[RMDB]
RNA sequence: GGGAACGACUCGAGUAGAGUCGAAAAAUUCCUUCCAGAUCCAUGUACCUUUCAUUUCAUGUUCUUAUCCCAGUAUUAUCUAGGAUUUCCAAUAUGAUGUUGAAAAGGAGUGGUGAGAGGGAACAUCCUUAUCUUGCUCUUGAUCUUGGUGAGAAAGGAACCAGUUACACUUCGGUGUAACUGGUUCAAAAGAAACAACAACAACAAC
Reactivity to 2A3 in 0.01 (KOAc 150mM, MgCl2 10mM, bicine 150mM(pH8.5), 24C), signal-to-noise 1, nucleotides 027 to 156: a010u010u030c020c040u020u050c000c040a040g010a080u020c050c020a000u060g010u180a300c000c000u010u020u030c000a010u000u010u010c000a000u000g010u000u020c040u080u000a000u000c000c000c000a000g020u060a200u300u040a070u200c020u030a010g000g020a000u110u000u000c020c010a000a000u010a010u020g010a000u020g060u150u040g000a050a080a090a030g020g000a000g000u010g000g000u000g000a060g000a000g020g000g000a000a010c010a000u010c000c010u070u090a160u100c030u020u060g050c040u010c030u070u150g200a190u030c040u110u100g040g000u090g020a090g030a030a070a020g160